[RMDB]
RNA sequence: GGGAACGACUCGAGUAGAGUCGAAAAAUUUUGAUUUAGCGUGGGAACCUGAGGCAUGCUGUCUCCUAGCAGAGGGAAGGAGCACACAAGAACAAGUUGAUUACAAAGAACACGCAGUUUCAGGACAGUUCUCUUUCAGGUUCGCCUGAAAGAGAACAAAAGAAACAACAACAACAAC
Reactivity to DMS in 0.01 (KOAc 150mM, MgCl2 10mM, bicine 150mM(pH8.5), 24C), signal-to-noise 2, nucleotides 027 to 126: a050u040u040u050u010g050a100u020u010u010a010g010c000g000u050g000g000g030a030a150c020c010u020g020a160g000g020c110a230u000g030c060u000g000u070c080u000c020c070u000a120g100c060a100g000a090g000g000g000a090a070g000g000a000g040c070a050c000a140c120a010a090g000a100a140c120a030a060g000u000u010g000a000u000u010a210c230a050a000a120g070a010a080c030a000c060g000c020a150g010u000u060u000c000a100g000g000a060c170a050
Reactivity to 2A3 in 0.01 (KOAc 150mM, MgCl2 10mM, bicine 150mM(pH8.5), 24C), signal-to-noise 3, nucleotides 027 to 126: a020u190u160u060u170g140a050u000u070u210a080g020c050g030u060g010g030g010a110a110c010c000u040g050a030g110g060c030a050u040g000c020u040g120u070c010u020c000c030u060a080g080c030a060g090a110g050g030g000a080a020g040g030a020g000c020a000c000a000c000a040a020g010a050a090c070a090a000g070u020u000g100a080u050u060a040c090a100a060a030g080a070a010c000a030c060g000c000a060g020u000u050u020c010a000g000g100a070c050a050